[RMDB]
RNA sequence: GGGAACGACUCGAGUAGAGUCGAAAAUUCGAGAGAAGCGGGGCGGCUGCCCUCGUCCGCGCGCUCGAACGCUCCUCCGCCGGUCCGGCUUCUCCUUCGUGCGGAGGCCUUUGGAAACAAAGGCGAACGUGCAGUAGCGUUUCGACGCUACUGCACGAAAAGAAACAACAACAACAAC
Reactivity to DMS in 0.01 (KOAc 150mM, MgCl2 10mM, bicine 150mM(pH8.5), 24C), signal-to-noise 1, nucleotides 027 to 126: u000u000c020g000a030g000a000g010a050a140g000c000g000g000g050g000c010g000g080c050u020g060c110c080c100u000c000g000u010c000c000g000c090g000c020g000c000u010c030g030a020a030c060g000c110u000c020c000u020c040c020g000c010c030g000g000u010c070c100g020g010c160u070u040c050u000c010c010u000u030c070g020u000g010c010g000g000a010g000g000c010c000u000u030u000g000g000a100a080a260c020a000a000a010g000g000c000g020a110a160
Reactivity to 2A3 in 0.01 (KOAc 150mM, MgCl2 10mM, bicine 150mM(pH8.5), 24C), signal-to-noise 1, nucleotides 027 to 126: u000u020c000g000a000g000a000g000a120a030g010c000g000g000g000g000c000g030g010c100u120g050c000c000c010u000c000g000u010c010c000g030c000g000c000g020c000u010c010g000a010a000c010g010c020u020c000c000u010c010c010g020c010c000g000g060u090c030c010g100g000c080u060u040c070u060c000c000u060u070c030g090u110g000c000g000g030a020g030g000c000c000u000u000u000g010g020a030a040a000c000a000a010a000g000g000c010g010a050a010
The data come from the RNA Mapping Database (RMDB), library RFM100. Chemical mapping of a 177-nucleotide RNA with DMS and 2A3. In probing experiments dimethyl sulfate is read out at A N1 and C N3, which are open when not base-paired. For DMS the reverse transcriptase was MarathonRT. For 2A3 the reverse transcriptase was SuperScript II with manganese. Values cover nucleotides 27 to 126. The reactions ran in a buffer of 150 mM KOAc, 10 mM MgCl2 and 150 mM bicine (pH 8.5), at 24 C.